[RMDB]
RNA sequence: GGGAACGACUCGAGUAGAGUCGAAAAGACCGUGAGGAGCCCAGUUCCGCGCGGGGCGCCGCCACGACGGGUGUGCCGUUCGCACAGGCCGAGGCCGCGAGUUGCCCGGACGAUCCGGUGCUUGAAGAAGUCAUGGUGUGUUCGCACACCAUGACUUAAAAGAAACAACAACAACAAC
Reactivity to 2A3 in 0.01 (KOAc 150mM, MgCl2 10mM, bicine 150mM(pH8.5), 24C), signal-to-noise 1, nucleotides 027 to 126: g000a010c040c000g060u070g100a040g050g000a010g000c000c010c010a030g050u090u090c030c070g060c000g010c000g000g020g000g020c010g000c000c000g060c010c010a050c060g110a030c030g010g050g010u030g050u030g050c010c050g100u040u080c100g010c000a030c000a030g100g000c030c020g010a040g040g000c010c040g030c010g040a030g050u070u090g030c000c030c000g020g000a060c060g030a010u040c010c000g000g000u070g050c000u000u120g040a050a090g000
Reactivity to DMS in 0.01 (KOAc 150mM, MgCl2 10mM, bicine 150mM(pH8.5), 24C), signal-to-noise 2, nucleotides 027 to 126: g010a120c050c000g020u050g000a140g000g040a050g000c000c090c050a180g020u050u010c020c030g020c100g010c060g000g020g020g000c010g020c040c160g000c050c080a110c080g040a080c040g000g000g040u000g010u010g030c020c140g010u010u020c030g010c060a080c020a130g000g040c000c010g000a150g000g010c010c060g040c040g010a100g000u030u000g000c010c010c000g000g010a160c150g000a130u020c070c010g000g000u010g000c000u000u020g010a210a060g050

Overview: This 177-nucleotide RNA was probed chemically with 2A3 and DMS. For DMS the reverse transcriptase was MarathonRT. The RNA was probed in 150 mM KOAc, 10 mM MgCl2 and 150 mM bicine (pH 8.5) at 24 C. Reactivities are rounded to 0.1 and cut off at 0 and 3.